Structure probing data (DMS and 2A3) for a 177-nucleotide construct. Source: RMDB library OK2TRN, as collected in RNAgym. Values cover nucleotides 27 to 126. Reactivities are rounded to 0.1 and cut off at 0 and 3. For DMS, 17,440 sequencing reads were counted.

RNA sequence: GGGAACGACUCGAGUAGAGUCGAAAACAGGUUCACAGAGGGUCUGAGGAAUGAAGAGGCCAUGGAAGGGGCCACAGCCACACUGCAAUGUGAGCUGAGCAAGGCAGCCCCUGUGGAGUGGAGGAAAGAAUAUAUUUACAUUCGUGUAAAUAUAUUCAAAAGAAACAACAACAACAAC
Reactivity to DMS in 0.01 (KOAc 150mM, MgCl2 10mM, bicine 150mM(pH8.5), 24C), signal-to-noise 9, nucleotides 027 to 126: c040a120g010g010u010u000c020a030c030a040g010a150g020g010g010u010c030u000g010a080g020g010a090a100u010g010a140a110g010a150g010g010c010c010a030u000g010g020a140a070g010g000g010g010c000c020a260c020a020g000c000c000a030c010a050c090u010g020c300a090a120u000g010u000g000a140g010c010u000g000a130g010c120a070a120g010g010c040a050g000c010c000c000c010u000g020u000g010g000a070g020u000g000g000a090g000g000a090a070a110
Reactivity to 2A3 in 0.01 (KOAc 150mM, MgCl2 10mM, bicine 150mM(pH8.5), 24C), signal-to-noise 6, nucleotides 027 to 126: c000a020g070g030u030u050c020a010c010a030g120a200g090g020g030u120c060u050g030a040g040g120a180a120u200g020a090a060g130a130g080g000c030c020a020u090g100g120a070a080g080g000g000g000c000c000a020c000a010g000c000c000a040c010a010c060u280g030c070a080a050u070g000u010g010a050g000c000u000g000a030g050c040a040a030g080g000c000a000g000c000c010c000c000u000g000u010g000g020a090g130u110g030g090a100g020g110a120a110a060